[RMDB]
RNA sequence: GGGAACGACUCGAGUAGAGUCGAAAAGAAGUCGUGUCUAUGCUGAAACGAUACUACGCACGAGAUUCCAAGGUCUCUGUAGAACGACCGCUUGUGACGACAAAGCUAUCACGUUCGACAUACGACAGGUAUCAUGUAGGUUCGCCUACAUGAUACCAAAAGAAACAACAACAACAAC
Reactivity to DMS in 0.01 (KOAc 150mM, MgCl2 10mM, bicine 150mM(pH8.5), 24C), signal-to-noise 4, nucleotides 027 to 126: g010a110a060g020u020c030g010u000g000u000c060u010a040u030g010c080u030g000a040a040a050c130g000a080u020a030c020u020a130c120g020c040a030c080g010a010g000a190u000u020c110c110a080a100g030g000u000c000u040c100u010g020u000a090g020a040a080c050g010a090c090c060g000c020u010u010g000u000g000a140c070g010a120c120a030a110a090g020c070u000a060u020c060a140c060g030u000u000c010g000a060c010a020u000a030c130g010a000c050a090
Reactivity to 2A3 in 0.01 (KOAc 150mM, MgCl2 10mM, bicine 150mM(pH8.5), 24C), signal-to-noise 5, nucleotides 027 to 126: g140a060a020g030u060c040g010u010g000u000c020u020a060u080g030c050u050g040a090a060a020c040g000a000u000a080c010u020a010c020g030c020a020c040g010a010g020a090u180u040c050c020a060a040g060g000u000c000u010c020u050g120u080a040g020a090a020c060g020a030c000c020g000c000u010u010g010u040g060a090c020g000a030c020a010a110a000g000c040u040a020u090c010a010c080g000u000u000c010g010a010c010a010u040a030c040g020a000c000a020